[RMDB]
RNA sequence: GGGAACGACUCGAGUAGAGUCGAAAAGUAUCAGACGUGAGCGUAGCGAACAGCACCAACUCGGUUUCCAGGUCUGCUACAGAAAUGAGAUUGGCACGUACAAGGCCAUUUCUGAUGGCCUCAGAAACAUGGGUAGAAAAUUCGUUUUCUACCCAUGAAAAGAAACAACAACAACAAC
Reactivity to 2A3 in 0.01 (KOAc 150mM, MgCl2 10mM, bicine 150mM(pH8.5), 24C), signal-to-noise 9, nucleotides 027 to 126: g070u060a060u110c030a020g020a050c050g050u040g040a050g040c050g020u100a010g030c020g070a100a050c050a060g030c020a010c020c020a040a060c030u030c060g060g000u010u050u030c030c020a020g010g060u000c020u060g030c030u070a040c010a030g110a030a070a040u180g020a120g030a110u060u090g040g000c050a030c150g030u170a040c060a060a020g080g030c010c010a000u030u040u030c070u130g060a070u030g010g000c000c010u040c030a020g100a020a050a010
Reactivity to DMS in 0.01 (KOAc 150mM, MgCl2 10mM, bicine 150mM(pH8.5), 24C), signal-to-noise 9, nucleotides 027 to 126: g010u020a070u010c030a030g010a060c040g010u000g020a090g010c080g020u020a070g000c040g010a080a060c130a140g020c070a090c050c050a070a110c050u020c050g020g000u010u010u000c030c050a100g000g000u010c020u010g010c070u010a060c040a050g010a040a050a050u030g000a070g000a140u010u000g000g010c050a070c130g010u020a080c150a090a030g000g000c010c000a010u000u010u040c090u030g000a110u000g000g000c010c010u000c090a060g010a100a070a110
This 177-nucleotide RNA was probed chemically with 2A3 and DMS. It was measured as part of the RMDB library OK1LIB.